Structure probing data (2A3 and DMS) for a 177-nucleotide construct. For 2A3, 20,365 sequencing reads were counted.
RNA sequence: GGGAACGACUCGAGUAGAGUCGAAAAGAUAUGGAUGUGGUGGCAACAGCUGCACGGGUCGGAAACGACCUGCAGACAUGCCAUAGAUCCUAAGUCAAACGUGGUAUGUGUUCGCACAUACCACGAACCCUUAUAUCCUCUUCGGAGGAUAUAAGGGAAAAGAAACAACAACAACAAC
Reactivity to 2A3 in 0.01 (KOAc 150mM, MgCl2 10mM, bicine 150mM(pH8.5), 24C), signal-to-noise 7, nucleotides 027 to 126: g020a020u050a030u110g000g010a010u030g120u190g190g200u020g010g000c030a200a060c110a300g090c030u020g000c020a110c270g120g020g010u020c010g010g010a020a020a020c000g000a000c010c010u000g000c000a000g030a110c040a090u110g000c000c000a000u010a010g010a000u000c000c000u010a070a020g030u040c060a090a030a090c030g000u000g010g000u010a010u000g030u000g020u060u060c160g070c090a000c000a010u000a000c010c000a000c000g000a000a000
Reactivity to DMS in 0.01 (KOAc 150mM, MgCl2 10mM, bicine 150mM(pH8.5), 24C), signal-to-noise 6, nucleotides 027 to 126: g000a030u000a190u000g000g010a010u010g020u010g030g040u000g000g010c000a050a100c300a150g010c000u000g000c010a060c190g020g010g010u000c000g000g010a050a050a130c000g010a010c000c000u000g000c000a000g010a070c110a130u010g010c010c000a010u010a070g000a020u000c000c000u000a040a100g000u010c020a100a090a230c020g020u000g000g010u000a000u000g010u000g010u000u000c240g030c000a010c000a000u000a000c000c000a000c000g000a020a030